Overview:
Chemical mapping of a 177-nucleotide RNA with 2A3 and DMS. For 2A3 the reverse transcriptase was SuperScript II with manganese. The reactions ran in a buffer of 150 mM KOAc, 10 mM MgCl2 and 150 mM bicine (pH 8.5), at 24 C. Source: RMDB library M2PK50, as collected in RNAgym. Values are in units of 0.01, from 0 to 300, in steps of 10. For DMS the reverse transcriptase was MarathonRT.
RNA sequence: GGGAACGACUCGAGUAGAGUCGAAAAUCAUCGUUCUUCGGAACGAUGAAGUAUAACGCGGGCUCCGGACACAGGCGUAGCUGGCCUGGGAUUGUCACAGUAUGGGGCAAACUUUCGAGUUUGCCAACACUUGCUAGGGUUUCGACCCUAGCAAGUGAAAAGAAACAACAACAACAAC
Reactivity to 2A3 in 0.01 (KOAc 150mM, MgCl2 10mM, bicine 150mM(pH8.5), 24C), signal-to-noise 1, nucleotides 027 to 126: u020c000a000u010c000g010u000u010c000u030u040c230g140g000a000a000c000g000a000u000g000a010a000g010u020a090u010a170a050c070g010c020g010g090g000c020u020c040c050g050g020a030c020a000c000a040g050g000c030g030u030a030g040c060u060g060g050c000c020u020g000g000g000a120u110u170g040u070c010a000c010a070g030u030a090u280g230g000g000g000c010a010a010a000c020u080u150u100c240g030a040g010u000u030u020g000c020c020a050a010
Reactivity to DMS in 0.01 (KOAc 150mM, MgCl2 10mM, bicine 150mM(pH8.5), 24C), signal-to-noise 2, nucleotides 027 to 126: u000c000a010u000c000g000u000u000c000u000u010c160g020g000a010a010c000g010a000u000g000a000a090g000u010a070u000a070a110c100g010c060g010g000g000c020u010c010c030g000g010a080c050a100c040a030g010g010c030g010u010a090g010c090u000g000g000c030c020u000g010g000g010a090u010u010g010u000c040a060c120a080g000u020a060u010g020g010g020g010c000a010a000a010c010u000u010u010c180g010a010g000u000u000u000g000c010c000a090a130